Overview: This 207-nucleotide RNA was probed chemically with 2A3 and DMS. For 2A3, 2,902 sequencing reads were counted. Reactivities are given for positions 27 through 156. The reactions ran in a buffer of 150 mM KOAc, 10 mM MgCl2 and 150 mM bicine (pH 8.5), at 24 C.

RNA sequence: GGGAACGACUCGAGUAGAGUCGAAAAGGUAGUAGCACUUUUGUUGAAGUUUCGUCCUUUUGGACUCAUCAGUAGGAAAACACAUUCCUAGACUUCGCGUGGGUGCGGGACAGCGGUCAGUGCGCCGUGCAUGCUGUGUUUAUCUCAAUCAAGCACAUCCGUUAUACAAGUUCGCUUGUAUAACGGAAAAAGAAACAACAACAACAAC
Reactivity to 2A3 in 0.01 (KOAc 150mM, MgCl2 10mM, bicine 150mM(pH8.5), 24C), signal-to-noise 4, nucleotides 027 to 156: g080g030u100a030g030u060a030g060c020a000c020u070u120u160u270g060u050u250g020a040a010g000u020u040u110c050g000u030c020c000u110u130u140u280g030g010a010c020u030c040a200u030c020a030g080u050a020g020g070a010a030a070a070c160a020c010a080u050u000c000c000u000a040g030a060c030u040u020c070g010c030g060u040g030g010g000u030g030c010g020g010g000a030c020a010g000c020g010g000u050c070a070g030u000g040c050g000c040c010g020u020g010c030a060u080g000c020u020g000u010g050u080u130u070a130u040c080u000c070a100a140u050c040a050a030g030c020a010c000a070
Reactivity to DMS in 0.01 (KOAc 150mM, MgCl2 10mM, bicine 150mM(pH8.5), 24C), signal-to-noise 2, nucleotides 027 to 156: g010g000u000a100g020u010a100g020c030a000c040u020u010u000u000g020u010u000g010a000a230g000u010u000u000c090g030u000c030c010u000u000u000u000g050g030a020c030u020c080a110u000c130a160g020u000a030g060g000a050a050a150a130c220a110c260a170u000u000c010c010u000a060g020a040c010u000u000c030g030c050g030u000g030g020g040u020g030c000g000g040g030a120c060a230g010c050g000g050u020c030a100g000u000g060c040g000c020c040g030u000g040c040a090u000g020c070u000g020u010g000u010u000u000a140u020c040u000c040a090a170u010c120a080a200g000c080a040c040a250